[RMDB]
RNA sequence: GGGAACGACUCGAGUAGAGUCGAAAAAGAGAUGUGAACAUUUAUUCUGUGUGCUGUAAGGGGCAUCUCAGAGUGCCACCCCCACAUCUCCAAAGCUGCUGGACCUUGCAUAUGGGAGCUGACUCUCGAUUCCCUCAAUUUUCGAAUUGAGGGAAUCAAAAGAAACAACAACAACAAC
Reactivity to DMS in 0.01 (KOAc 150mM, MgCl2 10mM, bicine 150mM(pH8.5), 24C), signal-to-noise 4, nucleotides 027 to 126: a110g000a050g010a030u000g020u000g010a140a110c140a060u020u000u010a050u010u000c020u000g010u000g010u000g000c010u000g010u020a110a140g020g010g000g010c010a020u000c070u000c040a040g010a080g010u000g000c110c090a250c050c020c030c030c020a050c030a020u000c030u000c000c080a040a100a080g000c030u000g000c030u000g010g010a090c110c030u000u000g020c090a090u000a090u000g010g000g010a080g010c070u000g000a110c090u000c050u010c100
Reactivity to 2A3 in 0.01 (KOAc 150mM, MgCl2 10mM, bicine 150mM(pH8.5), 24C), signal-to-noise 3, nucleotides 027 to 126: a000g010a010g000a000u030g000u010g080a160a060c100a130u100u180u280a060u180u060c030u030g010u000g010u010g010c040u000g020u110a090a080g220g000g010g010c000a050u050c040u030c090a020g020a010g010u040g060c030c020a030c020c010c000c010c010a010c000a020u000c000u000c000c000a050a120a000g030c030u080g010c000u030g070g020a060c000c000u030u030g050c030a060u110a090u170g040g000g000a040g010c050u030g050a090c010u020c010u000c070
Chemical mapping of a 177-nucleotide RNA with DMS and 2A3. DMS (dimethyl sulfate) methylates the pairing face of unpaired adenines and cytosines.